This 177-nucleotide RNA was probed chemically with DMS and 2A3. The RNA was probed in 150 mM KOAc, 10 mM MgCl2 and 150 mM bicine (pH 8.5) at 24 C. The DMS profile rests on 2,339 reads. The data come from the RNA Mapping Database (RMDB), library M2PK50.
RNA sequence: GGGAACGACUCGAGUAGAGUCGAAAACUCAUCGAGUUCGCUCGAUGAGAAAAUAAAAACCGUGUUUCCCGACGUUAAAGGGAUGAAAAAUAAACGUCAAAAAAAGAGAGCUGUUCGCAGCUCUCAAGAGUAAUAUUAUCUUCGGAUAAUAUUACUCAAAAGAAACAACAACAACAAC
Reactivity to DMS in 0.01 (KOAc 150mM, MgCl2 10mM, bicine 150mM(pH8.5), 24C), signal-to-noise 3, nucleotides 027 to 126: c000u000c000a030u000c000g010a020g020u000u030c180g020c000u010c010g000a040u000g000a010g000a020a030a020a050u010a060a060a090a060a130c090c030g000u010g010u010u000u000c000c000c030g010a010c000g000u010u020a040a030a150g000g000g010a040u010g000a010a090a090a060a100u000a050a050a050c180g000u020c060a000a010a060a070a080a130a190g000a020g000a000g010c000u000g020u000u010c190g000c000a000g010c000u000c000u000c010a010a060
Reactivity to 2A3 in 0.01 (KOAc 150mM, MgCl2 10mM, bicine 150mM(pH8.5), 24C), signal-to-noise 3, nucleotides 027 to 126: c000u020c000a010u010c000g010a010g020u080u030c130g130c080u010c000g000a000u000g000a000g000a040a180a000a000u030a000a040a030a000a010c030c020g050u010g050u040u030u020c000c000c020g000a010c010g010u070u080a060a050a060g080g000g030a070u160g070a160a120a040a000a000u190a050a100a020c020g100u070c130a030a060a010a000a000a220a080g000a000g000a000g000c000u000g050u060u080c230g020c180a000g000c060u030c000u000c010a000a000